[RMDB]
RNA sequence: GGGAACGACUCGAGUAGAGUCGAAAAACGCUUAUUUGCAUUCUUAUCAUGCCAGCAGCAUGCCGUUAAAUACUGCUUCACAGUGCUCGCUCACUGAGAAAGUUUCCACUGAAAGAUAUUAACAGUAUCUCUAUAUAACCUUCGGGUUAUAUAGAGAAAAAGAAACAACAACAACAAC
Reactivity to 2A3 in 0.01 (KOAc 150mM, MgCl2 10mM, bicine 150mM(pH8.5), 24C), signal-to-noise 3, nucleotides 027 to 126: a000c070g000c070u150u080a110u130u260u100g010c020a040u100u050c030u090u160a060u190c020a020u050g010c000c030a010g000c000a000g000c010a070u030g040c040c010g050u030u090a040a060a030u100a070c050u020g020c000u070u050c040a040c010a070g030u010g030c010u010c040g030c010u010c020a060c020u070g000a000g030a010a090a000g000u010u020u000c020c010a020c020u010g060a110a030a090g080a060u100a040u210u150a080a030c010a000g030u020a060
Reactivity to DMS in 0.01 (KOAc 150mM, MgCl2 10mM, bicine 150mM(pH8.5), 24C), signal-to-noise 3, nucleotides 027 to 126: a100c160g000c060u010u010a100u010u000u000g020c040a090u000u000c050u000u010a120u000c080a060u010g030c050c130a080g010c070a050g010c030a060u020g020c070c070g010u010u000a050a070a070u000a040c040u000g010c030u000u000c060a100c050a030g020u000g020c070u000c090g010c080u000c030a050c070u000g010a040g010a050a060a100g020u000u000u000c010c020a080c080u010g000a070a080a090g000a090u000a040u030u000a040a160c040a030g000u000a100